[RMDB]
RNA sequence: GGGAACGACUCGAGUAGAGUCGAAAACAGCGGCUACAACAUGAACCCUGUCUUCAUAUACUUGGUGCCGAAGCCCUGCCCCCGCGCGCGUAUCGUGCUCCCUGGUUUGUGCGCUCGGCCGGUACGCCCACCAUCCUAGUUUCGACUAGGAUGGUGGAAAAGAAACAACAACAACAAC
Reactivity to 2A3 in 0.01 (KOAc 150mM, MgCl2 10mM, bicine 150mM(pH8.5), 24C), signal-to-noise 1, nucleotides 027 to 126: c000a030g100c050g010g020c060u170a030c110a110a030c020a100u060g030a040a060c030c010c060u080g090u030c030u050u080c020a060u120a030u020a280c010u070u070g060g020u070g020c050c050g080a040a030g000c000c010c020u050g080c020c010c010c000c000g000c000g000c010g000c000g040u020a010u030c020g030u090g030c020u040c010c010c000u040g080g020u040u180u140g080u040g020c060g000c010u020c010g010g000c000c010g000g000u000a010c010g020c020
Reactivity to DMS in 0.01 (KOAc 150mM, MgCl2 10mM, bicine 150mM(pH8.5), 24C), signal-to-noise 2, nucleotides 027 to 126: c090a070g030c110g000g000c010u000a130c070a100a070c180a050u000g000a060a100c020c050c020u000g000u010c070u000u000c060a040u010a100u000a050c130u000u010g010g000u000g020c030c040g010a150a110g000c020c030c010u000g020c020c010c000c000c020g030c170g010c110g020c010g000u000a010u000c010g020u020g010c050u000c040c030c020u000g020g000u000u010u000g020u000g020c030g000c060u000c110g010g000c020c050g020g020u000a000c030g000c070
The data come from the RNA Mapping Database (RMDB), library OK2TRN. The record gives the reactivity of an RNA of 177 nucleotides to 2A3 and DMS. For DMS the reverse transcriptase was MarathonRT. High DMS reactivity at an A or C suggests that its Watson-Crick edge is free. Conditions: 150 mM KOAc, 10 mM MgCl2 and 150 mM bicine (pH 8.5), 24 C.